The data come from the RNA Mapping Database (RMDB), library M2RFPK. An RNA of 207 nucleotides, treated with 2A3 and DMS and read out base by base. The DMS profile rests on 4,269 reads. The reactions ran in a buffer of 150 mM KOAc, 10 mM MgCl2 and 150 mM bicine (pH 8.5), at 24 C. For 2A3, 2,163 sequencing reads were counted. Reactivities are given for positions 27 through 156.

RNA sequence: GGGAACGACUCGAGUAGAGUCGAAAACUCCCCUCAAAAUCGUUUCAGUCCAAAAUUGAUUCGGCGGCCCUGUCAUGAGGCCGAAACGAAGGCACGUACCCCUUCGCAUGGCGUCGGGGAGUCAGCGAAAGCACUGACCCUUUCGAGGGUCAGUGAAUCAAUCCAUAUGAUUCGUCAUAUGGAUUGAAAAAGAAACAACAACAACAAC
Reactivity to 2A3 in 0.01 (KOAc 150mM, MgCl2 10mM, bicine 150mM(pH8.5), 24C), signal-to-noise 3, nucleotides 027 to 156: c060u040c010c010c020c010u100c070a210a220a080a150u070c030g020u020u040u020c060a070g060u110c090c070a060a100a130a140u150u090g010a080u050u030c010g030g020c020g010g000c050c000c000u080g050u130c050a160u050g010a060g030g000c010c000g000a010a000a000c010g010a010a000g060g030c090a010c120g090u200a140c020c010c020c000u010u000c010g010c060a180u100g130g000c050g040u040c020g000g000g000g000a010g020u030c020a010g030c010g100a130a070a010g120c000a010c000u000g000a000c000c010c000u000u070u090c200g070a020g010g000g000u000c000a000g000u000g000a010a000
Reactivity to DMS in 0.01 (KOAc 150mM, MgCl2 10mM, bicine 150mM(pH8.5), 24C), signal-to-noise 2, nucleotides 027 to 156: c030u000c010c000c010c070u000c080a040a090a070a060u010c020g030u010u010u000c020a130g030u020c080c090a060a090a180a160u010u010g020a110u000u020c020g010g040c050g000g020c060c010c000u030g010u000c170a100u000g010a090g040g040c010c000g000a020a020a040c030g010a050a050g000g030c100a140c140g020u000a140c060c030c010c000u000u000c000g070c000a130u010g040g060c020g020u000c090g030g010g010g010a030g020u000c020a110g020c060g000a070a100a160g010c040a000c000u010g020a010c000c000c010u010u000u010c210g010a000g050g020g000u000c010a000g000u000g000a020a070